An RNA of 207 nucleotides, treated with 2A3 and DMS and read out base by base. 2A3 adducts were read by reverse transcription with SuperScript II with manganese. The RNA was probed in 150 mM KOAc, 10 mM MgCl2 and 150 mM bicine (pH 8.5) at 24 C.
[RMDB]
RNA sequence: GGGAACGACUCGAGUAGAGUCGAAAAGUGAGCGGGCUGUCAACAGAGGUAAAUUGCGCCUCCGCGAUACUGUCCGCCAGGAUCUGCGCGGUACGGGUGAACACCUCGAAAGUGUAGGUUUCGGUGUCCGUGGUGCGGUUACCCCAGAAGCGGAAACUAGUAUUUGAAUAUUCGUAUUCAAAUACUAAAAAGAAACAACAACAACAAC
Reactivity to 2A3 in 0.01 (KOAc 150mM, MgCl2 10mM, bicine 150mM(pH8.5), 24C), signal-to-noise 4, nucleotides 027 to 156: g140u080g030a090g000c000g000g010g000c000u010g030u040c010a030a010c020a090g020a040g020g010u130a100a200a300u220u210g080c090g000c000c000u010c010c010g010c040g010a020u030a100c070u050g020u000c000c000g000c010c000a020g020g010a040u000c030u080g000c010g000c020g030g190u080a030c010g000g000g010u070g070a100a020c040a010c060c020u080c080g060a100a080a080g120u180g080u230a040g100g000u010u040u040c050g000g030u030g020u020c010c020g000u050g010g250u060g010c020g000g060u060u160a120c000c000c000c010a020g030a080a020g080c080g020g000a080a000a000c010
Reactivity to DMS in 0.01 (KOAc 150mM, MgCl2 10mM, bicine 150mM(pH8.5), 24C), signal-to-noise 2, nucleotides 027 to 156: g010u010g000a070g000c010g010g010g000c000u010g010u010c030a070a060c100a040g000a020g000g030u000a050a080a240u010u010g010c190g020c010c000u000c010c010g000c020g020a290u010a080c040u000g010u000c000c020g030c020c040a100g000g000a100u010c040u010g000c030g010c040g010g030u000a060c070g040g000g020u000g010a060a050c050a030c000c020u030c040g000a050a050a080g010u000g030u000a160g030g010u000u000u000c030g020g040u020g010u020c030c000g010u000g030g040u000g000c010g030g010u000u010a100c030c000c020c000a160g000a080a220g020c030g000g000a130a080a120c170